[RMDB]
RNA sequence: GGGAACGACUCGAGUAGAGUCGAAAAACGUGUCGGGACUGACGCCUCCGGAGACGAAGGAUUCGUGCGCCACGUCGGCCAGCGUCAGUUGCCGGCGGAUGGUCGGCAGGAAUACCACCCGCCCUUCCGUGCAUCAGCGCUUCGGCGCUGAUGCACGAAAAGAAACAACAACAACAAC
Reactivity to 2A3 in 0.01 (KOAc 150mM, MgCl2 10mM, bicine 150mM(pH8.5), 24C), signal-to-noise 2, nucleotides 027 to 126: a010c190g040u130g030u060c000g050g000g000a000c000u020g000a000c000g040c010c030u120c110c080g050g010a060g010a010c000g020a190a290g070g000a000u060u200c020g040u200g050c050g000c020c020a080c000g010u000c000g030g200c080c000a010g030c000g000u030c030a030g000u030u030g010c000c000g000g000c000g000g000a090u130g010g000u190c000g050g000c040a080g020g140a050a020u170a220c000c060a040c010c000c030g040c000c000c010u000u010c000